Source information: Chemical mapping of a 177-nucleotide RNA with 2A3 and DMS. The DMS profile rests on 6,302 reads. For 2A3 the reverse transcriptase was SuperScript II with manganese.
RNA sequence: GGGAACGACUCGAGUAGAGUCGAAAAGAGUGGACAGAAGUGUCAGGGUGAGGGUGAGCACAGACAGACCAGCUGUCCAGGCAAGAAAUGGCAGCAGCCACAGGUGGGUCUCCCUCUGCUGUCUCCACACAAUACGGGAUUUCGAUCCCGUAUUGUGAAAAGAAACAACAACAACAAC
Reactivity to 2A3 in 0.01 (KOAc 150mM, MgCl2 10mM, bicine 150mM(pH8.5), 24C), signal-to-noise 4, nucleotides 027 to 126: g060a020g090u100g010g010a010c020a020g050a150a040g130u080g040u240c090a070g100g090g030u020g020a030g000g030g030u120g040a020g010c010a020c000a040g190a060c020a020g050a030c030c020a020g070c010u010g010u020c030c000a010g050g020c050a060a060g060a110a160a040u090g000g000c000a010g010c020a010g020c030c010a050c040a070g140g130u150g040g040g000u000c040u050c000c000c000u010c020u010g000c000u000g010u010c000u050c030c020a060
Reactivity to DMS in 0.01 (KOAc 150mM, MgCl2 10mM, bicine 150mM(pH8.5), 24C), signal-to-noise 5, nucleotides 027 to 126: g020a140g010u000g010g020a030c030a030g010a150a090g020u000g010u000c060a120g000g010g020u000g010a070g020g010g010u010g000a080g000c030a040c050a110g000a070c150a110g000a120c090c100a100g020c010u000g000u000c020c030a050g000g000c100a080a080g000a060a080a100u010g010g000c010a030g000c030a060g010c130c030a050c120a110g020g020u000g020g000g010u000c040u000c020c010c010u000c010u000g000c020u010g010u010c010u000c070c080a220